An RNA of 207 nucleotides, treated with 2A3 and read out base by base. The data come from the RNA Mapping Database (RMDB), library OK3TST.
[RMDB]
RNA sequence: GGGAACGACUCGAGUAGAGUCGAAAAGCGCCCGCCUGGAUGGACUUUGUUACCUUGAUAAUGCCAUUCUCGCGCCGCAGGUCAAUAUCACUCCAUGUAAGCGCCGUAGCUUCACCAAACCGCAGCCCCGUGCCUUCAAGGAAUCGCACAAACAGCGGCCACACUCAUUAUUCGUAAUGAGUGUGGCAAAAGAAACAACAACAACAAC
Reactivity to 2A3 in 0.01 (KOAc 150mM, MgCl2 10mM, bicine 150mM(pH8.5), 24C), signal-to-noise 1, nucleotides 027 to 156: g040c110g000c000c010c030g000c000c030u010g000g030a000u010g030g020a040c020u140u010u110g050u030u090a140c070c090u030u120g010a100u200a180a040u070g020c010c020a040u040u020c030u020c020g040c020g020c000c000g040c040a040g000g060u030c040a080a060u040a010u170c050a040c090u000c050c050a080u090g020u130a090a070g040c050g000c040c060g050u050a060g010c060u100u030c040a040c030c020a050a020a020c070c020g000c000a020g010c010c010c000c020g010u000g020c000c030u070u070c030a010a080g110g000a060a060u100c020g000c040a010c000a020a120a000c010a040g070c020g060